[RMDB]
RNA sequence: GGGAACGACUCGAGUAGAGUCGAAAACUGGGAAAGGAAAGAAAGCAACGGGGCUAGCUGCCGGGUGUUCCAUCCAUGGGAUCGGUGCCGAGUGAGGCUUAUCCCGGGGGGAUUGCCUCGGCCCCCUAAACUAUGCACUUCGGUGCAUAGAAAAGAAACAACAACAACAAC
Reactivity to DMS in 0.01 (KOAc 150mM, MgCl2 10mM, bicine 150mM(pH8.5), 24C), signal-to-noise 9, nucleotides 027 to 129: c080u000g010g000g000a020a020a020g040g000a020a030a030g000a050a020a050g040c110a110a080c140g030g010g010g040c070u030a090g040c020u020g010c010c030g010g030g030u030g010u020u020c000c000a050u020c060c090a100u020g000g010g010a000u020c100g020g020u040g010c000c030g010a120g020u030g010a100g000g000c030u000u000a030u020c030c010c020g010g010g000g000g000g000a030u030u030g000c010c000u010c040g020g030c030c000c000c010c030u000a040a050a110
Reactivity to 2A3 in 0.01 (KOAc 150mM, MgCl2 10mM, bicine 150mM(pH8.5), 24C), signal-to-noise 9, nucleotides 027 to 129: c050u060g020g000g020a040a060a020g030g030a030a010a010g030a020a060a000g040c020a030a080c050g020g010g030g030c030u060a060g020c030u060g050c030c010g010g020g020u040g020u040u010c030c010a070u030c030c030a140u170g070g000g000a030u060c090g060g070u120g060c000c000g030a040g060u190g080a080g030g000c010u060u070a060u060c000c000c000g010g000g010g010g000g000a060u060u150g040c000c000u060c020g000g000c000c000c000c000c000u000a010a010a010